[RMDB]
RNA sequence: GGGAACGACUCGAGUAGAGUCGAAAAGAUAUGGAAUGCAAGAGAGUAGACGUUGAAAUCGGAAACGAUGGAGUCUACUUCUCUUUCCCAUUCCUAAGUCAAAGACCAUGCGUUCGCGCAUGGUCAACCAUUAUAUCAGGUUCGCCUGAUAUAAUGGAAAAGAAACAACAACAACAAC
Reactivity to 2A3 in 0.01 (KOAc 150mM, MgCl2 10mM, bicine 150mM(pH8.5), 24C), signal-to-noise 5, nucleotides 027 to 126: g030a010u090a040u170g000g010a010a010u020g020c070a010a000g000a000g000a000g010u010a000g010a010c050g120u300u060g030a040a030a000u010c010g010g020a060a070a030c010g000a000u010g010g010a010g010u010c000u000a000c000u030u020c000u000c000u000u010u010c010c000c000a000u000u000c000c000u050a190a050g070u040c060a150a080a090g000a000c000c000a010u010g010c000g050u050u100c300g010c000g000c140a010u000g000g000u010c000a000a000
Reactivity to DMS in 0.01 (KOAc 150mM, MgCl2 10mM, bicine 150mM(pH8.5), 24C), signal-to-noise 9, nucleotides 027 to 126: g000a040u010a300u000g010g000a010a000u010g060c160a030a010g000a020g010a040g010u000a010g010a010c000g020u000u010g000a070a110a020u000c000g000g000a140a090a160c010g010a010u000g000g000a090g010u000c000u000a000c000u000u010c000u000c000u000u000u000c230c300c010a020u000u000c000c000u010a050a160g010u000c050a090a090a140g000a010c000c000a000u000g000c000g020u000u010c270g010c010g020c000a000u000g000g010u000c000a020a050

The record gives the reactivity of an RNA of 177 nucleotides to 2A3 and DMS.
Conditions: 150 mM KOAc, 10 mM MgCl2 and 150 mM bicine (pH 8.5), 24 C.
For 2A3 the reverse transcriptase was SuperScript II with manganese.
Source: RMDB library TTRDEL, as collected in RNAgym.
For DMS the reverse transcriptase was MarathonRT.